[RMDB]
RNA sequence: GGGAACGACUCGAGUAGAGUCGAAAAUAUUGAGUGCUUAAUUGCCAUACCGCUGCGGCGUGAUCCGCUGUUGUUCCCGUUCCAGCCGAUCCACGUCACCAUCGCGGCCUGGUUCACUAUCGGGAUCUCCUCUUACAUUCUUCGGAAUGUAAGAGGAAAAAGAAACAACAACAACAAC
Reactivity to DMS in 0.01 (KOAc 150mM, MgCl2 10mM, bicine 150mM(pH8.5), 24C), signal-to-noise 4, nucleotides 027 to 126: u010a100u000u010g000a080g010u010g010c260u000u000a080a070u010u010g010c000c020a080u010a140c060c010g000c040u000g020c080g010g000c010g030u000g000a080u000c010c170g020c020u000g000u000u000g010u000u000c000c000c000g030u010u010c090c010a040g000c020c120g000a040u000c050c030a040c080g000u000c030a080c110c210a080u010c100g000c010g000g000c060c050u000g000g010u000u000c070a060c100u000a070u010c060g020g000g000a110u000c090
Reactivity to 2A3 in 0.01 (KOAc 150mM, MgCl2 10mM, bicine 150mM(pH8.5), 24C), signal-to-noise 3, nucleotides 027 to 126: u290a060u050u170g040a050g060u160g050c030u100u200a130a060u300u140g010c020c030a030u070a090c010c010g000c020u010g020c040g030g020c000g020u050g020a010u000c010c010g000c040u020g060u050u100g020u020u010c010c000c010g000u130u010c010c000a010g000c010c010g000a020u030c100c030a040c010g020u020c000a030c050c040a100u100c030g000c000g010g000c020c020u040g010g030u090u080c040a050c040u070a050u180c030g050g020g000a030u000c040
An RNA of 177 nucleotides, treated with DMS and 2A3 and read out base by base.
For DMS, 4,257 sequencing reads were counted.
For 2A3, 2,849 sequencing reads were counted.
Conditions: 150 mM KOAc, 10 mM MgCl2 and 150 mM bicine (pH 8.5), 24 C.
The data come from the RNA Mapping Database (RMDB), library OK2TST.